Chemical mapping of a 207-nucleotide RNA with 2A3. It was measured as part of the RMDB library OK3TST. The 2A3 profile rests on 711 reads. For 2A3 the reverse transcriptase was SuperScript II with manganese.
[RMDB]
RNA sequence: GGGAACGACUCGAGUAGAGUCGAAAACAACUUCCUGAGCUCUUGACUGUCCAUGGAUACACACAGUUCAAAACAGCGAGACACUGAGGGACUGGAGAAGUGGGGAAGACUUGAUUCCUGUUUUUGCUCUGAAAAUUCCAAGUUGAGAAGGGAACCAAGAGAACAUUGUGUUCGCACAAUGUUCUCUAAAAGAAACAACAACAACAAC
Reactivity to 2A3 in 0.01 (KOAc 150mM, MgCl2 10mM, bicine 150mM(pH8.5), 24C), signal-to-noise 1, nucleotides 027 to 156: c010a000a020c030u030u030c010c000u030g070a060g050c010u010c000u080u040g070a120c070u060g000u030c080c060a060u120g020g070a090u170a210c030a000c010a010c020a100g020u170u010c060a080a030a100a130c030a020g000c020g080a000g020a050c030a030c040u030g020a090g050g010g010a090c040u020g020g000a060g000a080a030g010u090g010g020g010g020a000a090g000a040c000u010u060g000a020u050u050c020c030u020g090u000u020u000u000u050g040c010u000c000u030g070a130a000a070a080u100u030c040c040a060a080g070u060u070g080a060g000a140a030g010g020g010a020a030c030c020a060